[RMDB]
RNA sequence: GGGAACGACUCGAGUAGAGUCGAAAAGAUAUGGACGGUAAGAAGUCGCGGAAGAGGUUUAAACAGCUCGGAAACGAGCUGUUUAAACUACCCACCUUCCGAACUACGACCACUACCGUCCUAAGUCCACAUACGCAUUGUUCGCAAUGCGUAUGUGAAAAGAAACAACAACAACAAC
Reactivity to DMS in 0.01 (KOAc 150mM, MgCl2 10mM, bicine 150mM(pH8.5), 24C), signal-to-noise 2, nucleotides 027 to 126: g000a070u020a300u000g000g000a000c000g000g030u010a040a050g000a230a300g000u010c010g000c000g000g000a040a010g000a120g030g040u040u010u000a000a000a010c010a010g000c010u000c000g000g010a180a080a210c020g000a010g000c000u000g010u000u040u000a000a000a000c000u000a020c020c070c130a300c100c010u000u000c000c000g000a050a130c180u030a300c000g030a010c000c090a140c200u020a020c000c000g010u000c010c000u000a000a050g000u000c040

Conditions: 150 mM KOAc, 10 mM MgCl2 and 150 mM bicine (pH 8.5), 24 C. Structure probing data (DMS) for a 177-nucleotide construct. Source: RMDB library TTRINS, as collected in RNAgym.